RNA sequence: GGGAACGACUCGAGUAGAGUCGAAAAACCUUUGUGAUGUAGGGAGCUACUGUGGCAGAGCAUCGCCCAUUGGGCGAUGACCCUCUGCUACGGUUAGCUUUGAUCUACAUCACUCUGGUAAAACAUUGAGCACUGGGUUCGCCCAGUGCUCAAUGAACUAACGAAAAGAGUUCGCUCUUUUCGUUAGAAAAGAAACAACAACAACAAC
Reactivity to DMS in 0.01 (KOAc 150mM, MgCl2 10mM, bicine 150mM(pH8.5), 24C), signal-to-noise 1, nucleotides 027 to 156: a060c020c000u000u000u000g010u000g010a010u010g010u000a030g020g000g000a010g010c000u000a010c000u000g040u000g030g020c010a020g020a030g080c030a020u000c010g050c000c020c000a300u000u000g030g020g020c010g000a000u010g000a040c160c160c020u010c010u010g000c000u030a010c000g000g030u000u000a010g000c010u000u000u000g010a120u000c000u010a000c010a020u000c000a000c000u000c020u000g000g000u000a060a060a110a230c010a040u010u010g010a010g000c020a010c010u000g020g010g030u000u000c300g000c000c000c010a020g040u000g020c000u000c000a000a010u000g000a030a200
Reactivity to 2A3 in 0.01 (KOAc 150mM, MgCl2 10mM, bicine 150mM(pH8.5), 24C), signal-to-noise 2, nucleotides 027 to 156: a000c000c000u000u000u000g000u000g000a000u000g000u000a010g020g020g010a010g000c000u000a000c000u000g000u000g010g010c000a000g000a010g020c000a010u000c010g000c030c000c120a300u300u300g020g000g000c010g000a000u010g010a030c050c010c010u000c000u000g000c000u000a000c010g000g000u070u120a000g000c000u050u030u000g000a010u000c000u000a000c000a000u000c000a000c000u000c000u000g000g020u050a090a070a020a000c010a000u020u000g000a000g000c010a000c000u010g000g030g020u090u090c150g060c000c000c000a000g000u000g000c010u000c000a000a000u000g000a000a010